[RMDB]
RNA sequence: GGGAACGACUCGAGUAGAGUCGAAAACGAUUAGCAUUCGUGCUAAUCGAAUCAGGUAGUACCUAUCUCUAUUACCUGUAGUGGCCAUCGUCCGGACAGAGAAUCGAGUCCUGUUCGCAGGACUCAACUGAUAAACCUUAUUCGUAAGGUUUAUCAGAAAAGAAACAACAACAACAAC
Reactivity to 2A3 in 0.01 (KOAc 150mM, MgCl2 10mM, bicine 150mM(pH8.5), 24C), signal-to-noise 9, nucleotides 027 to 126: c010g000a010u000u000a000g000c010a010u010u060c220g100u070g000c000u000a000a000u000c000g010a010a080u080c010a000g020g000u010a010g010u020a050c020c040u110a130u150c080u000c010u030a030u040u040a020c010c000u020g020u040a070g060u060g070g010c030c020a080u070c050g080u000c020c030g030g030a040c040a050g090a010g040a090a110u190c120g000a010g010u000c000c000u010g020u030u040c270g000c050a000g000g000a000c000u000c000a000a010
Reactivity to DMS in 0.01 (KOAc 150mM, MgCl2 10mM, bicine 150mM(pH8.5), 24C), signal-to-noise 9, nucleotides 027 to 126: c010g010a010u000u000a000g000c000a030u000u010c210g030u000g010c000u000a000a000u000c000g010a070a070u000c020a010g000g010u000a010g010u000a070c180c100u010a120u010c110u000c100u000a020u000u000a010c010c000u000g010u000a080g020u000g010g000c030c030a060u000c070g000u000c020c030g010g010a080c120a080g000a100g010a080a110u010c150g000a020g010u000c000c000u000g000u000u010c190g020c010a010g000g000a010c000u000c000a020a070